[RMDB]
RNA sequence: GGGAACGACUCGAGUAGAGUCGAAAACCUGAGGGAUAGAUGCGGAAGAACGGAACGCAUUUGUUUUGGGAUUCUUCUCUAGAGUGGCUUUGCUCACGUCGGACUCAUCCUCAGCAAUCACGUGGAAGUAAUGCAUGCCAUUCGUGGCAUGCAUUACAAAAGAAACAACAACAACAAC
Reactivity to DMS in 0.01 (KOAc 150mM, MgCl2 10mM, bicine 150mM(pH8.5), 24C), signal-to-noise 2, nucleotides 027 to 126: c030c000u000g030a070g000g000g000a140u000a010g000a040u010g000c040g050g010a040a080g010a140a070c070g000g000a120a030c000g000c300a080u040u010u010g000u000u000u000u060g000g010g010a170u000u000c000u000u020c080u020c060u000a050g020a040g020u000g000g000c010u020u020u000g010c000u000c000a090c110g000u010c030g000g000a220c140u000c050a300u040c000c000u000c090a020g000c130a070a190u000c040a140c150g000u060g000g000a220a120
Reactivity to 2A3 in 0.01 (KOAc 150mM, MgCl2 10mM, bicine 150mM(pH8.5), 24C), signal-to-noise 6, nucleotides 027 to 126: c000c010u020g030a070g020g100g030a020u070a100g050a020u070g020c020g060g040a130a090g060a220a100c090g030g060a060a050c020g030c080a100u050u040u120g060u000u100u060u120g060g020g030a110u050u040c010u090u010c040u000c020u060a070g020a020g100u090g030g000c040u070u110u100g000c000u040c010a030c080g050u020c020g010g000a020c000u000c020a040u030c000c010u010c020a060g020c040a040a190u170c080a060c140g080u110g060g030a060a070
Chemical mapping of a 177-nucleotide RNA with DMS and 2A3. Conditions: 150 mM KOAc, 10 mM MgCl2 and 150 mM bicine (pH 8.5), 24 C. 2A3 adducts were read by reverse transcription with SuperScript II with manganese. It was measured as part of the RMDB library OK1LIB. For 2A3, 3,541 sequencing reads were counted.